Conditions: 150 mM KOAc, 10 mM MgCl2 and 150 mM bicine (pH 8.5), 24 C. Chemical mapping of a 177-nucleotide RNA with 2A3 and DMS. For 2A3 the reverse transcriptase was SuperScript II with manganese. DMS adducts were read by reverse transcription with MarathonRT.
RNA sequence: GGGAACGACUCGAGUAGAGUCGAAAAAGCACGGAUAGUUAUGGAUCUAAGCAGGCAUCGUGCUUCAAGCUGCGCCGACGAACCUACGAACAAGCGUCCCUACCGCGACCCUGAGCUGUCCCAAUAAAAAAGUAAAUCACUUCGGUGAUUUACUUUUAAAAGAAACAACAACAACAAC
Reactivity to 2A3 in 0.01 (KOAc 150mM, MgCl2 10mM, bicine 150mM(pH8.5), 24C), signal-to-noise 8, nucleotides 027 to 126: a000g050c020a020c030g080g050a110u090a130g120u130u080a160u220g090g020a120u110c060u110a060a100g080c030a030g030g030c020a030u060c020g020u010g010c000u040u060c050a060a010g010c030u080g000c010g020c030c030g020a040c020g020a040a060c000c030u080a090c060g050a090a010c040a130a010g030c010g060u070c000c000c000u030a030c000c030g040c010g050a080c000c000c020u030g030a010g010c020u020g040u050c000c010c030a020a020u220a070a110
Reactivity to DMS in 0.01 (KOAc 150mM, MgCl2 10mM, bicine 150mM(pH8.5), 24C), signal-to-noise 6, nucleotides 027 to 126: a050g010c020a030c020g010g010a070u020a070g020u000u020a080u020g000g000a120u040c090u010a080a130g010c030a070g000g010c030a060u010c030g000u000g000c010u010u010c110a080a110g010c030u000g000c070g020c050c010g000a100c070g020a080a100c030c040u020a060c080g010a080a080c120a060a060g010c060g000u000c010c000c030u010a070c070c030g000c060g000a060c030c020c020u000g010a080g010c040u010g000u000c010c010c010a060a080u060a000a040